[RMDB]
RNA sequence: GGGAACGACUCGAGUAGAGUCGAAAAUCGUGCUGUGUGAUCUUUGGCGAUCACUGCCUCUCUGGGCCUGUGUCUUAGGCUCUGCAAGAUCAACCGAGCAAAGCACACGGCCUGCAGAGAGGCAGCGUAAUGACUCUGCCUUCGGGCAGAGUCAUUAAAAAGAAACAACAACAACAAC
Reactivity to DMS in 0.01 (KOAc 150mM, MgCl2 10mM, bicine 150mM(pH8.5), 24C), signal-to-noise 1, nucleotides 027 to 126: u020c070g130u010g000c010u030g000u000g020u020g020a060u000c020u000u040u010g030g030c200g000a040u030c050a170c000u000g000c010c000u030c000u000c010u000g000g000g000c010c000u000g010u000g040u150c000u000u000a140g000g000c000u000c000u000g000c190a160a120g100a130u030c260a060a190c030c210g000a000g060c000a000a020a000g040c130a000c000a000c210g040g020c030c000u020g030c010a000g000a000g060a010g000g000c010a000g000c110g030
Reactivity to 2A3 in 0.01 (KOAc 150mM, MgCl2 10mM, bicine 150mM(pH8.5), 24C), signal-to-noise 1, nucleotides 027 to 126: u180c010g010u000g030c060u010g000u020g000u010g050a060u000c080u000u050u110g140g060c070g000a010u020c000a000c000u000g000c000c000u000c000u000c000u000g000g000g010c000c000u040g030u010g090u080c050u020u020a110g040g040c000u000c000u000g010c040a120a250g030a210u250c050a000a210c030c050g000a020g000c000a010a010a010g060c000a010c000a030c150g020g030c030c000u040g000c010a000g000a000g030a000g000g000c000a000g060c000g010